Conditions: 150 mM KOAc, 10 mM MgCl2 and 150 mM bicine (pH 8.5), 24 C. Chemical mapping of a 207-nucleotide RNA with 2A3 and DMS. The DMS profile rests on 3,622 reads. It was measured as part of the RMDB library RFM130. For 2A3, 5,488 sequencing reads were counted. For DMS the reverse transcriptase was MarathonRT.

[RMDB]
RNA sequence: GGGAACGACUCGAGUAGAGUCGAAAAAUACAUUUGUAUCUAGCACAGGAAGUGUGCAAAGUUACGCCUUUAUAAGAUAUGAUGUGUGAGACCUGUAGGGAAUGCGUUGGAGCUCAAACUCUGUAAAAUCCCAAAUCGUAAUUGUUCGCAAUUACGAGUCAUCUUAUGGGUUCGCCCAUAAGAUGACAAAAGAAACAACAACAACAAC
Reactivity to 2A3 in 0.01 (KOAc 150mM, MgCl2 10mM, bicine 150mM(pH8.5), 24C), signal-to-noise 7, nucleotides 027 to 156: a000u070a010c020a030u060u070u190g010u020a010u000c020u020a020g040c010a010c010a020g150g220a290a140g190u030g000u020g030c030a050a050a000g030u070u070a050c040g050c010c010u080u130u050a210u070a130a020g020a020u040a010u070g020a010u020g030u000g020u020g040a050g030a070c020c030u050g060u110a050g000g020g020a050a060u080g010c010g030u060u090g020g010a010g030c000u010c050a030a060a070c010u010c010u030g060u160a030a030a030a080u020c000c010c020a040a090a020u030c000g000u000a000a000u000u010g030u060u070c140g010c110a000a010u000u000a000c000g010a020
Reactivity to DMS in 0.01 (KOAc 150mM, MgCl2 10mM, bicine 150mM(pH8.5), 24C), signal-to-noise 2, nucleotides 027 to 156: a060u000a050c030a150u050u000u000g050u000a020u010c010u020a210g020c040a050c090a060g030g010a130a140g030u000g050u030g030c010a090a010a060g000u000u000a030c120g020c250c020u000u000u000a080u030a140a120g020a060u000a040u000g010a020u000g000u000g000u030g020a200g010a090c040c040u000g020u000a140g050g000g040a080a100u010g000c030g020u000u020g010g010a030g000c010u020c160a050a030a060c030u000c020u020g030u000a050a040a060a120u000c020c000c030a050a060a180u000c010g010u010a020a020u000u000g010u000u030c300g010c000a010a020u000u000a010c000g000a070